[RMDB]
RNA sequence: GGGAACGACUCGAGUAGAGUCGAAAAGGGAGGUUGACUCCCCGGCACCAAAAGGCCCUGGCCCAACUAGGUGCUCACCGAAUGAACACACAAGAGAAUGAAUGUAAGGUCAGCUGGUGGGACAGUGCAGUGAUGAGAUCUUCGGAUCUCAUUAUUGAAAAGAAACAACAACAACAAC
Reactivity to 2A3 in 0.01 (KOAc 150mM, MgCl2 10mM, bicine 150mM(pH8.5), 24C), signal-to-noise 9, nucleotides 027 to 126: g020g010g010a020g040g040u180u240g110a090c000u000c000c000c000c000g040g000c020a100c050c000a040a070a040a060g100g010c020c020c030u050g090g000c010c010c010a070a100c030u070a030g150g010u090g040c010u010c010a030c000c000g020a030a100u150g050a070a010c050a000c010a000c020a120a050g070a020g060a240a120u180g050a100a020u100g040u140a080a040g030g010u010c010a010g010c030u030g000g000u020g000g000g020a020c010a020g030u030g030
Reactivity to DMS in 0.01 (KOAc 150mM, MgCl2 10mM, bicine 150mM(pH8.5), 24C), signal-to-noise 9, nucleotides 027 to 126: g000g000g000a020g010g010u050u050g010a260c010u010c000c000c000c060g000g000c120a260c030c040a070a070a130a120g000g010c020c020c040u010g000g010c010c010c020a080a070c060u010a070g010g010u010g010c120u010c100a050c000c000g000a130a130u020g000a090a060c080a060c100a090c120a100a090g000a140g010a130a090u030g000a110a080u020g010u010a090a130g000g010u000c050a040g000c050u010g000g010u000g000g000g000a050c040a040g000u010g000